[RMDB]
RNA sequence: GGGAACGACUCGAGUAGAGUCGAAAAGAAAGUAGCGAAAGCUGGACAGCUUCACGGUCCAGCAACGUGAAGCAAAGAGCAUCACCAUGUACGAUGCUCGAGUACGUGGAAAAGCUACGAAAAGAAAGGGUAUAGGUAACUUCGGUUACCUAUACCCAAAAGAAACAACAACAACAAC
Reactivity to 2A3 in 0.01 (KOAc 150mM, MgCl2 10mM, bicine 150mM(pH8.5), 24C), signal-to-noise 1, nucleotides 027 to 126: g140a020a110a000g000u000a000g050c050g000a060a010a000g020c020u040g000g020a000c000a030g060c060u060u080c060a070c030g030g000u000c020c030a000g050c000a000a000c000g000u030g010a080a000g000c000a000a000a140g000a000g000c020a000u000c000a060c060c020a110u230g050u110a080c180g030a030u040g000c030u030c000g000a000g000u070a000c030g000u020g040g070a020a060a000a000g000c000u000a000c000g050a030a080a000a000g050a060a030a010
Reactivity to DMS in 0.01 (KOAc 150mM, MgCl2 10mM, bicine 150mM(pH8.5), 24C), signal-to-noise 3, nucleotides 027 to 126: g020a060a100a100g000u000a000g010c000g020a070a170a100g020c000u000g000g000a070c000a090g010c130u000u040c200a050c160g000g010u000c000c010a000g000c020a000a000c010g000u000g010a060a120g000c070a070a080a180g000a000g000c000a000u020c000a200c090c090a160u070g030u040a080c190g020a000u030g000c000u010c000g000a140g010u030a020c010g000u000g010g000a060a070a060a070g000c010u010a000c000g000a040a040a100a070g000a160a080a100
Chemical mapping of a 177-nucleotide RNA with 2A3 and DMS. The reactions ran in a buffer of 150 mM KOAc, 10 mM MgCl2 and 150 mM bicine (pH 8.5), at 24 C. For 2A3 the reverse transcriptase was SuperScript II with manganese. DMS adducts were read by reverse transcription with MarathonRT.